[RMDB]
RNA sequence: GGGAACGACUCGAGUAGAGUCGAAAACCAGGGAUUUUCGUCCUCGAGUUUCUUGAUGGUUCUCCUGCUCUUCCGGAGCCUUCUUUCGAGGUCUUCCGCGUCUUUUCUUGCUUGGAUCCAUUUCUCGCUAACAUCUCUGGUUCGCCAGAGAUGUUAGAAAAGAAACAACAACAACAAC
Reactivity to DMS in 0.01 (KOAc 150mM, MgCl2 10mM, bicine 150mM(pH8.5), 24C), signal-to-noise 1, nucleotides 027 to 126: c010c010a140g000g010g020a100u000u000u000u000c080g000u000c030c030u010c070g020a120g000u000u000u000c040u010u000g010a140u010g020g000u000u010c040u000c020c040u000g000c030u000c050u000u010c070c020g010g040a150g010c040c040u000u000c050u000u000u000c120g000a030g000g000u000c060u010u000c020c040g000c130g010u000c030u020u000u000u000c050u000u000g000c030u000u000g000g000a080u000c040c060a100u000u000u000c010u000c130g010
Reactivity to 2A3 in 0.01 (KOAc 150mM, MgCl2 10mM, bicine 150mM(pH8.5), 24C), signal-to-noise 2, nucleotides 027 to 126: c030c000a010g020g030g000a030u130u170u120u150c040g010u020c020c000u010c010g040a010g010u050u140u000c080u040u150g030a050u060g060g040u070u070c040u000c000c000u020g000c010u040c020u110u050c030c050g020g050a040g010c000c000u040u060c010u050u160u060c070g010a010g030g000u000c020u050u030c050c000g000c040g050u060c020u080u110u060u050c040u070u090g040c010u030u020g040g000a040u000c010c000a060u030u050u000c000u030c010g000
Source information: The record gives the reactivity of an RNA of 177 nucleotides to DMS and 2A3. Source: RMDB library 15KREP, as collected in RNAgym. 2A3 adducts were read by reverse transcription with SuperScript II with manganese. Conditions: 150 mM KOAc, 10 mM MgCl2 and 150 mM bicine (pH 8.5), 24 C.